[RMDB]
Conditions: 150 mM KOAc, 10 mM MgCl2 and 150 mM bicine (pH 8.5), 24 C.
This 177-nucleotide RNA was probed chemically with 2A3 and DMS.
It was measured as part of the RMDB libraries RFM100 and RFMREP.
For 2A3 the reverse transcriptase was SuperScript II with manganese.
Reactivities are given for positions 27 through 126.
Values are in units of 0.01, from 0 to 300, in steps of 10.

RNA sequence: GGGAACGACUCGAGUAGAGUCGAAAACAGGGUAAGAUCUCUAUUGGCAGGAAACCAUUACUUAGAUCUUUGCAUCUCUUUAUGCAUUGCUUUUAAUUAGUGAGUUAUCUGCCAAAGGAGAUUUGCCCAUUCCUGAUCCAUUCGUGGAUCAGGAAUGAAAAGAAACAACAACAACAAC
Reactivity to 2A3 in 0.01 (KOAc 150mM, MgCl2 10mM, bicine 150mM(pH8.5), 24C), signal-to-noise 9, nucleotides 027 to 126: c040a030g030g010g010u100a140a040g040a160u000c000u000c000u010a120u070u020g010g000c000a000g010g050a040a020a000c000c000a000u000u000a000c010u000u000a000g000a020u000c000u010u000u000g000c000a030u010c080u040c040u210u280u200a010u010g000c000a010u000u020g040c080u030u030u000u000a000a000u000u010a000g010u000g110a090g030u040u020a070u070c000u000g000c000c000a000a000a000g010g000a000g000a000u000u000u000g000c010c000
Reactivity to DMS in 0.01 (KOAc 150mM, MgCl2 10mM, bicine 150mM(pH8.5), 24C), signal-to-noise 7, nucleotides 027 to 126: c100a160g000g000g010u010a030a050g000a000u000c000u000c000u010a300u010u000g010g010c000a000g010g010a050a020a010c000c000a000u000u000a010c120u000u000a000g000a000u000c000u000u010u000g000c000a010u010c300u040c260u020u040u020a020u000g010c010a010u010u000g010c180u000u000u010u000a010a010u000u000a000g020u000g020a110g020u000u000a040u010c000u010g000c000c020a000a020a300g020g000a000g000a010u000u000u000g000c000c010